[RMDB]
RNA sequence: GGGAACGACUCGAGUAGAGUCGAAAAAGGUGGGAGGAUCAGCCACCGGAGAGGGACGCGAUGGUAAGAGUGGAGGAAAGUUCGGAGGGAAAUCCCAAGAAGGUCAUUCGAGAUUCAAGAGGUGAGGCAACAGGAGGGUUCGCCCUCCUGAAAAGAAACAACAACAACAAC
Reactivity to DMS in 0.01 (KOAc 150mM, MgCl2 10mM, bicine 150mM(pH8.5), 24C), signal-to-noise 4, nucleotides 027 to 129: a060g030g040u050g040g040g010a090g030g000a050u050c110a120g000c060c000a090c060c060g070g020a000g000a070g010g060g020a060c180g000c070g010a010u010g000g030u000a080a030g000a040g040u040g000g030a040g000g000a050a040a080g080u000u000c050g000g040a080g000g000g000a030a040a070u020c000c000c000a130a090g000a030a060g010g030u020c050a090u000u060c070g010a000g020a030u040u060c000a050a080g000a000g000g030u050g030a040g000g000c030a100a080
Reactivity to 2A3 in 0.01 (KOAc 150mM, MgCl2 10mM, bicine 150mM(pH8.5), 24C), signal-to-noise 5, nucleotides 027 to 129: a050g090g020u100g010g000g000a040g040g010a040u060c040a020g040c030c030a040c030c000g020g000a020g000a000g000g010g000a010c020g040c040g090a050u050g000g010u040a040a020g060a010g050u100g030g000a000g000g040a030a000a010g050u040u050c020g020g010a010g000g000g000a040a060a040u050c000c000c020a010a030g050a000a010g020g010u030c010a060u060u060c030g010a000g010a050u070u040c040a070a000g000a000g030g050u040g010a020g020g010c010a020a010
Chemical mapping of a 170-nucleotide RNA with DMS and 2A3. DMS adducts were read by reverse transcription with MarathonRT. The data come from the RNA Mapping Database (RMDB), library 15KLIB.